RNA sequence: GGGAACGACUCGAGUAGAGUCGAAAACAAUUCGGCUGGUAAUGAUAUACGACUUCGGUGGUGGCACUUUCGAUGUGUGCGCUGCCUCGAUAUUGAGUAACACAGUUGUCGUAUCCGCGACUGGGGGCUUUAGUCUCAGAUUCGUCUGAGACUAAAGAAAAGAAACAACAACAACAAC
Reactivity to 2A3 in 0.01 (KOAc 150mM, MgCl2 10mM, bicine 150mM(pH8.5), 24C), signal-to-noise 4, nucleotides 027 to 126: c030a020a110u150u060c030g030g000c020u040g030g060u110a140a090u140g060a020u010a010u020a130c030g010a040c060u090u080c110g010g000u020g020g030u050g070g050c010a010c020u140u230u200c200g100a210u140g030u020g000u060g180c020g000c030u020g000c020c010u000c010g030a030u030a060u130u130g050a050g070u090a100a010c120a000c000a190g030u050u030g020u050c010g000u010a130u050c030c050g030c010g010a020c030u050g000g000g000g040g000
Reactivity to DMS in 0.01 (KOAc 150mM, MgCl2 10mM, bicine 150mM(pH8.5), 24C), signal-to-noise 6, nucleotides 027 to 126: c130a110a160u010u010c070g010g010c030u000g010g010u000a090a070u000g000a140u000a050u000a040c010g010a050c110u000u000c080g020g030u000g010g070u000g010g020c030a020c030u000u000u010c190g000a090u000g010u010g000u000g010c040g010c040u000g000c040c010u000c030g010a120u010a060u000u010g000a140g000u000a070a120c070a070c030a040g010u000u000g010u000c020g020u000a050u000c110c080g010c060g010a070c060u000g010g020g000g000g010